The record gives the reactivity of an RNA of 177 nucleotides to 2A3 and DMS. For 2A3, 651 sequencing reads were counted. The reactions ran in a buffer of 150 mM KOAc, 10 mM MgCl2 and 150 mM bicine (pH 8.5), at 24 C.
[RMDB]
RNA sequence: GGGAACGACUCGAGUAGAGUCGAAAAGCAGUAUACUGCUACUUGUGUGAGAAUACUUUUAGUACAAGCGAGUACACGCAGUAUAGUGCCACUUGUGUGAGAAUACUUUUAGUACAAGCGAGUACACAUUGGGAGGACAGUUCGCUGUCCUCCCAAUAAAAGAAACAACAACAACAAC
Reactivity to 2A3 in 0.01 (KOAc 150mM, MgCl2 10mM, bicine 150mM(pH8.5), 24C), signal-to-noise 2, nucleotides 027 to 126: g070c050a000g130u000a000u050a040c000u010g110c000u000a000c000u000u020g020u020g000u040g170a160g140a110a030u030a000c000u000u230u250u160a070g000u040a000c030a060a060g020c000g030a010g040u000a030c110a000c080g070c000a000g060u000a000u000a010g100u080g000c090c060a040c000u130u100g000u010g000u000g030a090g000a150a130u230a060c000u010u100u090u110a000g060u000a010c070a200a000g100c070g080a000g120u000a000c030a000c000
Reactivity to DMS in 0.01 (KOAc 150mM, MgCl2 10mM, bicine 150mM(pH8.5), 24C), signal-to-noise 1, nucleotides 027 to 126: g030c000a000g000u000a020u030a050c000u000g000c000u010a040c070u000u000g080u000g000u000g000a170g010a210a060u000a030c060u040u070u010u060a030g010u030a020c000a180a160g010c060g000a150g000u000a050c100a040c090g010c130a000g000u000a000u000a030g000u000g030c160c000a070c140u000u000g000u000g000u050g000a010g040a150a150u000a090c040u000u000u000u000a180g000u000a010c230a120a250g020c230g000a170g020u010a000c050a000c200